An RNA of 170 nucleotides, treated with 2A3 and DMS and read out base by base. For DMS the reverse transcriptase was MarathonRT.
[RMDB]
RNA sequence: GGGAACGACUCGAGUAGAGUCGAAAACGCUGGCGCCGGCUGGGCAACAUUCCGAGGGGACCGUCCCCUCGGUAAUGGCGAAUGGGACCCACAAACCUCUCUAGAUUCCGAUAGAGAAUCGAGAGGACUACUCCACAGUUCGCUGUGGAGAAAAGAAACAACAACAACAAC
Reactivity to 2A3 in 0.01 (KOAc 150mM, MgCl2 10mM, bicine 150mM(pH8.5), 24C), signal-to-noise 9, nucleotides 027 to 129: c050g000c030u050g050g010c030g040c020c000g050g010c040u080g010g040g020c030a050a030c010a040u030u000c000c000g000a010g020g010g020g030a090c040c040g300u300c020c000c000c000u000c000g000g000u000a000a000u010g020g010c030g060a040a030u090g010g010g030a050c020c020c000a030c060a030a060a040c000c000u000c000u000c010u030a060g000a010u000u000c010c020g050a090u120a150g270a030g000a050a010u010c010g010a000g000a000g000g000a010c010u040a050
Reactivity to DMS in 0.01 (KOAc 150mM, MgCl2 10mM, bicine 150mM(pH8.5), 24C), signal-to-noise 7, nucleotides 027 to 129: c130g000c050u000g020g020c040g030c080c040g000g000c070u000g010g000g000c020a100a080c060a050u010u020c000c000g000a030g000g020g000g030a200c190c290g060u050c000c010c000c040u000c010g040g020u020a010a000u020g010g020c070g000a030a020u070g000g000g020a110c000c000c010a080c170a100a100a080c030c020u010c000u000c010u020a130g000a020u000u010c000c020g050a180u010a120g020a120g030a030a030u000c000g010a010g000a030g030g020a030c040u000a060
For 2A3, 50,757 sequencing reads were counted.